[RMDB]
Conditions: 150 mM KOAc, 10 mM MgCl2 and 150 mM bicine (pH 8.5), 24 C.
The record gives the reactivity of an RNA of 177 nucleotides to DMS and 2A3.
2A3 adducts were read by reverse transcription with SuperScript II with manganese.
For DMS the reverse transcriptase was MarathonRT.
RNA sequence: GGGAACGACUCGAGUAGAGUCGAAAACGAGAGCAUCGAAGACGACAGCUACGGGCUGUUCACCCCCUUGAUGGGGCAAUUGGGCCAGGACUCCGCGAUGCACCCGGCGGAACUCGUCUACGCGCUGAUAGAGCCAUAUGUUCGCAUAUGGCUCUAUAAAAGAAACAACAACAACAAC
Reactivity to DMS in 0.01 (KOAc 150mM, MgCl2 10mM, bicine 150mM(pH8.5), 24C), signal-to-noise 3, nucleotides 027 to 126: c100g020a100g020a130g010c040a020u000c010g010a120a060g010a190c080g000a030c090a050g000c050u000a060c130g000g000g020c010u000g000u000u000c100a150c130c000c010c010c040u000u010g020a130u010g010g010g000g050c100a020a060u000u000g020g000g020c030c060a110g000g000a100c080u000c020c050g000c030g010a060u010g010c060a050c040c010c000g010g000c030g010g010a060a080c080u000c060g000u000c030u010a040c080g030c160g010c060u000g000
Reactivity to 2A3 in 0.01 (KOAc 150mM, MgCl2 10mM, bicine 150mM(pH8.5), 24C), signal-to-noise 1, nucleotides 027 to 126: c020g030a010g000a040g060c030a040u030c030g010a040a020g050a030c040g000a030c020a020g000c030u060a080c070g090g150g000c010u020g000u030u080c040a160c020c020c000c010c060u080u120g170a210u300g090g000g050g000c010a020a040u150u080g020g000g030c010c000a050g010g000a130c050u020c020c010g000c010g020a010u120g000c000a060c030c000c010g030g000c020g010g020a050a030c030u040c020g000u000c050u030a030c060g050c030g040c010u000g010